[RMDB]
RNA sequence: GGGAACGACUCGAGUAGAGUCGAAAAUGUGAUCCUUCCAGCAUUGUUCUUUUUGCUCAAGAUUGCUUUGGGCGUUUACAGUCUUUUGUAACUCCGUAUAAAUUUUAGGAUUGUUUUUUCCAUUUCUGUGAAAAAUGACAUGGAAUUCCAAUACAAACUAGCUAUGUGAAUUCGUUCACAUAGCUAGAAAAGAAACAACAACAACAAC
Reactivity to DMS in 0.01 (KOAc 150mM, MgCl2 10mM, bicine 150mM(pH8.5), 24C), signal-to-noise 2, nucleotides 027 to 156: u000g010u010g000a060u010c030c010u020u010c100c050a100g030c030a040u000u010g010u010u010c060u010u000u000u010u000g020c020u030c040a100a100g000a130u000u000g000c030u000u000u000g030g020g020c040g000u010u000u000a050c080a140g020u000c030u000u000u010u020g020u000a040a030c020u000c010c020g020u020a160u010a050a100a120u010u010u010u000a120g020g020a080u000u000g020u000u010u000u020u000u000c010c010a130u000u000u000c100u020g040u000g010a030a100a080a110a060u010g000a050c040a080u000g000g010a040a080u000u010c040c040a030a130u010a160c100a120a080a260
Reactivity to 2A3 in 0.01 (KOAc 150mM, MgCl2 10mM, bicine 150mM(pH8.5), 24C), signal-to-noise 5, nucleotides 027 to 156: u120g030u050g020a050u010c010c000u040u070c060c040a010g010c020a040u040u070g070u170u130c050u060u160u080u140u120g010c040u040c050a040a090g020a240u000u200g050c040u150u090u070g040g020g000c050g070u100u080u070a030c010a040g080u120c060u080u210u130u050g030u020a030a030c030u030c040c020g090u130a060u140a230a140a200u240u260u190u170a030g000g010a000u000u050g060u020u060u000u000u010u030c010c000a010u040u030u000c030u030g090u070g100a080a060a040a060a110u090g000a000c000a020u010g000g000a010a000u020u030c020c010a040a040u120a190c040a000a110a030